RNA sequence: GGGAACGACUCGAGUAGAGUCGAAAAACACUGCCAACUAUUGGUUCCCACGGGGUAACAACCUCCCCAUGGACCAACCAAUAGACUUUGAGAUCAAGCUGCUGUGCGCAGCGCACUGGCUGGCGGUUCAAUGCAUGAUCUUCGGAUCAUGCAUUGAAAAAGAAACAACAACAACAAC
Reactivity to DMS in 0.01 (KOAc 150mM, MgCl2 10mM, bicine 150mM(pH8.5), 24C), signal-to-noise 3, nucleotides 027 to 126: a100c110a100c030u010g030c000c030a050a290c010u010a010u000u000g010g000u000u000c130c000c000a000c080g000g000g000g000u000a100a090c170a140a100c150c110u000c010c000c000c020a070u000g000g000a110c110c230a040a020c000c010a000a030u000a000g010a190c060u010u010u010g010a180g000a120u000c120a040a120g010c020u000g030c010u000g020u000g000c130g000c050a000g000c000g010c080a030c090u010g010g030c100u010g000g050c000g010g020u000
Reactivity to 2A3 in 0.01 (KOAc 150mM, MgCl2 10mM, bicine 150mM(pH8.5), 24C), signal-to-noise 2, nucleotides 027 to 126: a000c050a010c020u040g020c000c000a070a020c030u010a000u010u010g000g000u000u020c000c000c000a000c000g020g000g000g000u090a140a050c090a080a070c070c070u110c010c000c000c000a010u040g000g010a030c040c030a010a000c030c010a010a000u030a000g040a040c040u100u070u200g160a140g040a110u110c080a090a020g000c000u020g060c010u090g100u170g190c130g000c100a040g050c020g000c020a030c070u040g040g000c020u030g050g000c000g030g000u030
Structure probing data (DMS and 2A3) for a 177-nucleotide construct. Conditions: 150 mM KOAc, 10 mM MgCl2 and 150 mM bicine (pH 8.5), 24 C. Source: RMDB library OK2TRN, as collected in RNAgym. For DMS, 1,668 sequencing reads were counted. The 2A3 profile rests on 2,188 reads.